An RNA of 177 nucleotides, treated with 2A3 and DMS and read out base by base. Conditions: 150 mM KOAc, 10 mM MgCl2 and 150 mM bicine (pH 8.5), 24 C. Reactivities are given for positions 27 through 126. 2A3 adducts were read by reverse transcription with SuperScript II with manganese. For DMS, 3,584 sequencing reads were counted.
[RMDB]
RNA sequence: GGGAACGACUCGAGUAGAGUCGAAAAAGAAAGGUGGCCCGGUUACCUAUAUAGAGAUAAUGAUACCGGCGCGCGCGCGCUGGCUGGCCUCCGCAUUGAAUAGAGUAGGUACACGCGCGCGAAAAAACAUAAUUGACAAGUUCGCUUGUCAAUUAUGAAAAGAAACAACAACAACAAC
Reactivity to 2A3 in 0.01 (KOAc 150mM, MgCl2 10mM, bicine 150mM(pH8.5), 24C), signal-to-noise 3, nucleotides 027 to 126: a000g060a020a060a000g030g010u030g030g050c040c000c000g000g010u030u040a050c010c000u050a050u030a030u080a300g120a030g030a100u110a200a100u140g040a040u020a060c000c010g000g020c060g000c000g000c010g000c000g010c000g020c140u040g060g030c080u030g070g000c030c000u000c000c030g030c060a130u120u300g090a090a080u120a130g050a020g050u080a010g000g030u080a090c000a010c010g000c000g020c000g000c020g000a040a030a000a010a000a000
Reactivity to DMS in 0.01 (KOAc 150mM, MgCl2 10mM, bicine 150mM(pH8.5), 24C), signal-to-noise 4, nucleotides 027 to 126: a120g000a120a070a040g000g020u000g010g010c080c020c030g010g010u000u000a030c030c010u010a080u020a170u010a130g010a150g000a150u010a060a060u000g000a110u000a020c000c000g000g020c130g010c010g020c000g010c000g010c010g020c130u000g020g010c100u000g010g000c130c010u000c010c050g020c120a160u010u000g010a120a110u010a080g000a080g010u000a160g000g000u000a050c060a060c020g020c010g010c010g010c000g000a000a020a020a060a040a060